An RNA of 177 nucleotides, treated with DMS and 2A3 and read out base by base.
It was measured as part of the RMDB library OK2TRN.
2A3 adducts were read by reverse transcription with SuperScript II with manganese.
DMS adducts were read by reverse transcription with MarathonRT.
The 2A3 profile rests on 80,844 reads.
For DMS, 51,777 sequencing reads were counted.
RNA sequence: GGGAACGACUCGAGUAGAGUCGAAAAACGUGCGAAAGCACGGUACUGUAGUGAGGAUAUACGAGAUCGAUAGAUCGGCGAUCCAUAUAUACAUGAGGAUCACCCAUGUAGAAGGCACUUCAGUACAAUCCAUAUAAUGAUUCGUCAUUAUAUGGAUAAAAGAAACAACAACAACAAC
Reactivity to DMS in 0.01 (KOAc 150mM, MgCl2 10mM, bicine 150mM(pH8.5), 24C), signal-to-noise 9, nucleotides 027 to 126: a200c020g020u000g000c000g000a150a090a190g010c000a010c000g010g010u000a000c010u000g010u000a010g020u000g000a090g010g010a080u000a050u010a080c020g010a300g010a010u000c010g010a180u010a070g000a030u000c040g010g010c020g010a010u000c000c010a110u010a100u000a090u000a040c100a030u000g010a090g010g010a130u010c280a100c020c010c100a030u000g010u000a010g000a110a180g000g000c010a010c010u000u000c000a010g000u000a010c030a120
Reactivity to 2A3 in 0.01 (KOAc 150mM, MgCl2 10mM, bicine 150mM(pH8.5), 24C), signal-to-noise 9, nucleotides 027 to 126: a000c010g000u000g000c010g060a150a010a010g000c000a000c000g000g010u000a000c000u010g010u020a010g000u000g040a100g030g050a140u030a010u010a110c030g010a020g000a090u010c020g070a120u110a270g030a020u020c020g050g010c010g030a000u000c000c010a010u060a010u010a000u010a150c060a030u090g040a160g090g020a100u150c080a280c050c010c000a020u060g000u000a020g010a140a030g100g000c000a000c000u010u010c010a000g000u000a000c010a000